The data come from the RNA Mapping Database (RMDB), library RFM100. The record gives the reactivity of an RNA of 177 nucleotides to 2A3. The RNA was probed in 150 mM KOAc, 10 mM MgCl2 and 150 mM bicine (pH 8.5) at 24 C.
RNA sequence: GGGAACGACUCGAGUAGAGUCGAAAAAUUCCCUUAAGUGUUGCCGCUAUGACUUAAAUAGUUGAAGUGGAGUCAAACGAGGGAUAAAGAGAAAUGGGGUAUUCAAGAUAUACUCUCCUAAUAUCAUCCAACCUAGAGGGUUCGCCCUCUAGGUUGGAAAAGAAACAACAACAACAAC
Reactivity to 2A3 in 0.01 (KOAc 150mM, MgCl2 10mM, bicine 150mM(pH8.5), 24C), signal-to-noise 1, nucleotides 027 to 126: a000u000u000c000c000c000u000u020a180a000g060u080g090u150u140g000c000c000g000c000u040a140u210g000a000c000u000u260a190a020a080u230a180g030u000u000g110a050a050g000u000g000g000a070g080u080c010a020a010a010c000g000a140g010g000g000a000u170a030a050a210g110a000g060a110a000a110u080g000g000g000g000u030a000u000u280c200a270a000g080a110u180a000u000a020c000u030c000u050c020c000u150a170a090u070a000u100c000a110u000